[RMDB]
RNA sequence: GGGAACGACUCGAGUAGAGUCGAAAAGAUAUGGAAUAAUGGAGCUGCUCGAAAGCUCCUAAGACAGAUAGUCGGAAACGACUAUUCGAGGAGCUUUCGAGAUAGCGUUGAAAUUAUUCCUAAGUCACGAUACACAUGAGUUCGCUCAUGUGUAUCGAAAAGAAACAACAACAACAAC
Reactivity to DMS in 0.01 (KOAc 150mM, MgCl2 10mM, bicine 150mM(pH8.5), 24C), signal-to-noise 2, nucleotides 027 to 126: g000a040u000a300u010g000g000a030a000u000a020a000u010g000g020a050g030c010u000g010c000u020c000g010a020a030a000g010c010u000c000c010u000a030a010g010a070c300a080g000a020u020a010g000u000c020g020g010a190a180a120c000g010a010c000u000a000u000u000c000g000a000g000g000a040g000c010u000u000u000c000g040a000g000a010u000a010g030c010g000u000u010g000a150a110a020u000u030a020u000u000c000c000u000a050a120g010u000c030a210